[RMDB]
RNA sequence: GGGAACGACUCGAGUAGAGUCGAAAACUUCGCAACUUCGGUUGCGAAGAAUGGCAGCUCGUCCCGGCGCUGGGUUCGCCGGGUUAUAAAAGAUAACACAUCACUGGCUACCAUUCGUGGUAGCCAAGUAGAUGCAUCUGUUCGCAGAUGCAUCUACAAAAGAAACAACAACAACAAC
Reactivity to DMS in 0.01 (KOAc 150mM, MgCl2 10mM, bicine 150mM(pH8.5), 24C), signal-to-noise 2, nucleotides 027 to 126: c020u000u000c000g020c000a020a030c020u000u010c170g030g010u010u000g000c000g000a000a010g010a030a060u010g010g020c140a150g010c030u000c040g000u030c020c020c010g010g010c010g000c190u000g000g010g020u000u000c000g010c010c010g000g000g010u000u000a020u000a040a050a020a080g000a090u000a030a040c060a080c080a070u010c150a110c230u000g000g000c000u000a000c000c000a040u000u020c170g010u000g000g000u000a000g010c000c000a000a030
Reactivity to 2A3 in 0.01 (KOAc 150mM, MgCl2 10mM, bicine 150mM(pH8.5), 24C), signal-to-noise 2, nucleotides 027 to 126: c010u000u000c000g000c000a000a000c030u040u050c170g150g030u000u000g000c000g000a000a000g000a010a020u040g010g020c050a040g010c030u050c030g100u100c040c000c000g040g030c030g020c100u170g070g120g040u040u040c000g000c000c110g010g050g000u010u020a090u020a010a040a000a020g090a060u120a070a030c040a000c010a090u120c030a030c100u040g010g000c020u000a010c000c010a010u030u030c300g030u010g010g000u000a000g000c000c000a010a000

The record gives the reactivity of an RNA of 177 nucleotides to DMS and 2A3. The 2A3 profile rests on 2,380 reads. Reactivities are given for positions 27 through 126. The DMS profile rests on 2,099 reads. The reactions ran in a buffer of 150 mM KOAc, 10 mM MgCl2 and 150 mM bicine (pH 8.5), at 24 C. Values are in units of 0.01, from 0 to 300, in steps of 10.